[RMDB]
RNA sequence: GGGAACGACUCGAGUAGAGUCGAAAAAAAAUUUCGUACGGUGUGCGUCGUAACAACAAGCAGCGUCUGAAAAGUUUUGUGAAUUUCCAAUUCUAUACAAAGCAAAGUGAAAAUAUCUGUAUUUUUAUAGUACGCAUAAGUUCGCUUAUGCGUACUAAAAAGAAACAACAACAACAAC
Reactivity to DMS in 0.01 (KOAc 150mM, MgCl2 10mM, bicine 150mM(pH8.5), 24C), signal-to-noise 2, nucleotides 027 to 126: a030a000a090a010u000u000u000c010g010u050a020c010g020g000u010g000u000g000c300g040u000c150g020u030a150a060c160a110a010c040a080a300g000c040a030g000c020g030u000c000u030g010a130a060a010a060g030u000u010u000u010g000u000g000a120a020u010u000u000c010c050a160a130u010u000c040u020a070u010a030c090a000a040a020g060c070a040a060a040g020u010g000a060a030a020a040u000a060u010c140u010g010u000a020u000u010u000u000u000a120
Reactivity to 2A3 in 0.01 (KOAc 150mM, MgCl2 10mM, bicine 150mM(pH8.5), 24C), signal-to-noise 2, nucleotides 027 to 126: a000a010a000a000u040u030u020c020g010u040a040c000g000g090u020g000u030g070c020g020u040c030g070u070a120a050c030a050a000c000a030a040g020c030a020g050c000g010u000c020u010g020a030a040a060a040g000u000u000u020u020g130u010g030a060a030u040u020u010c020c000a070a040u130u010c100u130a240u020a090c040a030a090a000g100c010a040a100a060g060u170g120a110a150a090a020u180a080u060c020u040g020u030a070u020u040u020u000u020a130
This 177-nucleotide RNA was probed chemically with DMS and 2A3. The DMS profile rests on 2,003 reads. The reactions ran in a buffer of 150 mM KOAc, 10 mM MgCl2 and 150 mM bicine (pH 8.5), at 24 C.